[RMDB]
RNA sequence: GGGAACGACUCGAGUAGAGUCGAAAAUGUUUCCCAGCCAGGGAUUUUCCUCCUCUAGUUUCUUGAGUUUCUUCUUGGUCUUCCGGAGGUCCCUCUCGAGCUCUUCCGCUUUCUUUCUUCCAUUGACACGCCACGUCCUUCGGGACGUGGAAAAGAAACAACAACAACAAC
Reactivity to DMS in 0.01 (KOAc 150mM, MgCl2 10mM, bicine 150mM(pH8.5), 24C), signal-to-noise 1, nucleotides 027 to 129: u040g040u060u000u010c000c000c000a200g030c090c090a080g010g000g000a100u000u000u000u000c010c020u010c000c000u010c050u020a110g040u090u010u000c020u010u030g000a130g060u000u020u000c130u020u000c080u030u000g060g000u030c040u030u030c090c040g050g010a100g040g010u020c040c020c020u020c020u000c000g020a150g000c000u010c010u000u000c010c030g000c070u030u040u010c050u060u010u040c080u000u020c050c020a000u070u010g000a140c150a000c180g060
Reactivity to 2A3 in 0.01 (KOAc 150mM, MgCl2 10mM, bicine 150mM(pH8.5), 24C), signal-to-noise 3, nucleotides 027 to 129: u080g010u000u040u010c000c000c010a000g050c020c010a040g000g000g000a020u040u050u120u150c000c000u060c000c010u030c040u050a050g040u060u090u060c020u040u140g090a140g010u070u080u000c050u050u000c020u020u040g000g020u000c000u100u000c030c010g000g000a000g000g030u050c000c000c000u010c010u000c000g080a070g000c020u010c000u070u030c010c020g050c020u000u040u000c000u000u050u000c000u070u000c000c010a090u010u050g060a020c070a040c090g050
Source: RMDB library 15KLIB, as collected in RNAgym. Structure probing data (DMS and 2A3) for a 170-nucleotide construct. For 2A3 the reverse transcriptase was SuperScript II with manganese. DMS (dimethyl sulfate) methylates the pairing face of unpaired adenines and cytosines. Conditions: 150 mM KOAc, 10 mM MgCl2 and 150 mM bicine (pH 8.5), 24 C.